[RMDB]
RNA sequence: GGGAACGACUCGAGUAGAGUCGAAAAAGCAAACGGGCGCCCCGGAGCCUUGCUGAGAGGCAGGUAAGGCACCCACCCAGCUGGGAAGGCUGAGCUGCGGCCUGGGGUGGAAAUGAGGGGUCUUCCCGCCUCCCUUCCAAGGGCCACGGCGCGCUCACAGUGGCCAUAAUUUCGAUUAUGGCCACUGAAAAGAAACAACAACAACAAC
Reactivity to 2A3 in 0.01 (KOAc 150mM, MgCl2 10mM, bicine 150mM(pH8.5), 24C), signal-to-noise 2, nucleotides 027 to 156: a020g140c100a100a080a060c080g010g010g000c010g000c000c080c020c000g000g020a020g010c000c010u040u020g000c060u050g020a040g000a000g090g000c110a070g030g020u080a000a000g010g000c010a150c000c000c010a010c000c000c010a040g070c100u120g040g040g100a150a020g100g010c070u130g110a090g090c060u150g130c070g040g020c030c070u060g000g000g010g050u050g040g030a090a150a130u300g040a100g010g050g010g000u000c000u000u000c000c000c000g000c010c000u010c000c000c000u050u030c030c050a050a030g060g020g040c050c020a040c000g000g000c000g000c000g000c000u000c000a020
Chemical mapping of a 207-nucleotide RNA with 2A3. For 2A3 the reverse transcriptase was SuperScript II with manganese. The RNA was probed in 150 mM KOAc, 10 mM MgCl2 and 150 mM bicine (pH 8.5) at 24 C. The 2A3 profile rests on 1,459 reads.